[RMDB]
RNA sequence: GGGAACGACUCGAGUAGAGUCGAAAAAUUGUCCUCGAUUGAUUUGGGUCACACAGAGAAAUACUGCAGGAGAGCAGUCAAAGGCAUGGACACGAGCGUCAAAUUAUAUAGUUUGGAAUUCCAGCGCUGCCAUAUUCAAUAUGAACUUGGAUAAGCAAUCAGCACUAUGUUUCGACAUAGUGCUGAUAAAAGAAACAACAACAACAAC
Reactivity to DMS in 0.01 (KOAc 150mM, MgCl2 10mM, bicine 150mM(pH8.5), 24C), signal-to-noise 1, nucleotides 027 to 156: a070u020u020g020u030c030c010u000c050g000a170u010u000g010a080u000u000u020g010g010g040u020c040a110c070a150c040a140g030a090g000a190a160a120u000a020c030u010g040c020a160g020g000a170g020a130g020c020a040g030u000c060a050a080a080g040g010c040a120u010g030g020a070c010a050c060g010a110g020c120g040u000c040a040a030a110u000u000a080u000a150u000a120g030u020u000u000g020g010a060a220u000u000c040c050a030g000c060g020c000u010g020c000c000a050u010a040u000u020c020a090a170u010a240u010g020a010a040c050u010u000g000g000a050u000a030a010g000c070a140
Reactivity to 2A3 in 0.01 (KOAc 150mM, MgCl2 10mM, bicine 150mM(pH8.5), 24C), signal-to-noise 3, nucleotides 027 to 156: a000u080u090g010u020c010c000u050c030g100a110u030u100g040a050u040u010u120g050g010g010u070c030a020c010a010c030a080g060a010g060a110a130a080u110a080c030u050g040c040a020g060g090a060g000a000g000c010a000g010u040c010a050a060a000g040g050c030a030u020g050g020a020c030a020c140g020a000g020c040g020u040c010a000a000a100u190u110a130u040a060u030a140g060u010u020u060g060g040a060a050u070u000c030c030a040g040c030g010c100u050g000c000c000a020u010a020u100u030c030a030a070u070a110u300g040a000a030c030u040u010g000g000a040u140a180a020g040c010a020

Chemical mapping of a 207-nucleotide RNA with DMS and 2A3. Conditions: 150 mM KOAc, 10 mM MgCl2 and 150 mM bicine (pH 8.5), 24 C. The 2A3 profile rests on 1,101 reads. For 2A3 the reverse transcriptase was SuperScript II with manganese.